[RMDB]
RNA sequence: GGGAACGACUCGAGUAGAGUCGAAAAGCUUGGAGUCUCAGCUGCGUUGCCCAGGGUUACAGGGCCAGAGCUGAGACUCAUGCCAGACUGAGCGCCUGCUGCCUCCCCAGGGGUGGGGUGCCUGGGGGGUGCAUGUCUAAUUCGUUAGACAUGCACCAAAAGAAACAACAACAACAAC
Reactivity to 2A3 in 0.01 (KOAc 150mM, MgCl2 10mM, bicine 150mM(pH8.5), 24C), signal-to-noise 4, nucleotides 027 to 126: g040c030u100u160g210g010a010g010u000c010u010c010a000g010c000u160g090c070g250u130u120g010c010c010c010a030g090g070g020u270u210a110c160a170g000g010g000c010c020a030g010a000g130c000u000g010a010g000a000c000u010c000a000u000g000c000c000a070g020a110c040u090g020a010g060c030g040c020c000u030g030c040u030g030c010c010u020c000c010c000c000a000g000g010g010g020u070g000g070g000g000u050g070c010c010u000g000g010g000g000
Reactivity to DMS in 0.01 (KOAc 150mM, MgCl2 10mM, bicine 150mM(pH8.5), 24C), signal-to-noise 5, nucleotides 027 to 126: g010c020u000u000g010g010a010g010u000c000u000c000a010g000c010u000g000c240g010u010u010g030c000c010c000a130g010g010g010u010u020a100c180a140g010g010g020c010c070a100g000a030g020c000u000g010a010g000a010c000u010c010a010u000g010c020c030a120g000a110c100u010g000a110g020c050g000c060c010u000g000c070u000g000c020c020u000c000c000c010c020a050g010g010g000g020u000g010g000g000g020u010g010c010c010u000g010g000g010g010